[RMDB]
RNA sequence: GGGAACGACUCGAGUAGAGUCGAAAAUGGACUGCGUUCGCGCAGUCCAAAAGAUUAGACGAACACUAGCGUAGAAGUGUUCAGGUCACAUAACUACGCAAAAAAGCUGAGUGUUCGCACUCAGCAAGUUAGCUGUAGGGUUCGCCCUACAGCUAACAAAAGAAACAACAACAACAAC
Reactivity to 2A3 in 0.01 (KOAc 150mM, MgCl2 10mM, bicine 150mM(pH8.5), 24C), signal-to-noise 1, nucleotides 027 to 126: u040g000g000a020c000u010g010c010g020u030u070c120g000c010g040c080a010g000u020c000c000a000a000a000a000g010a030u050u080a030g050a070c050g000a040a000c000a010c030u060a070g000c000g000u020a000g020a210a010g010u000g010u000u020c010a000g000g060u040c050a010c000a160u080a140a050c020u000a010c000g000c000a000a000a080a000a000a080g000c000u000g020a000g020u000g010u040u100c230g040c010a000c000u000c000a010g000c000a000a020
Reactivity to DMS in 0.01 (KOAc 150mM, MgCl2 10mM, bicine 150mM(pH8.5), 24C), signal-to-noise 2, nucleotides 027 to 126: u000g010g000a010c000u020g010c000g070u000u000c240g020c000g020c020a010g010u010c010c000a010a010a050a090g000a120u000u000a080g000a110c130g000a020a000c020a020c010u000a140g010c000g030u000a060g010a170a060g010u000g020u000u010c010a050g010g000u040c080a090c130a100u000a110a260c010u000a000c000g000c010a010a030a110a050a050a090g010c030u000g000a010g010u000g010u000u000c280g020c000a010c000u000c000a000g000c000a020a060

An RNA of 177 nucleotides, treated with 2A3 and DMS and read out base by base. Source: RMDB library M2PK50, as collected in RNAgym. The reactions ran in a buffer of 150 mM KOAc, 10 mM MgCl2 and 150 mM bicine (pH 8.5), at 24 C. For DMS the reverse transcriptase was MarathonRT. For 2A3, 2,373 sequencing reads were counted. 2A3 adducts were read by reverse transcription with SuperScript II with manganese.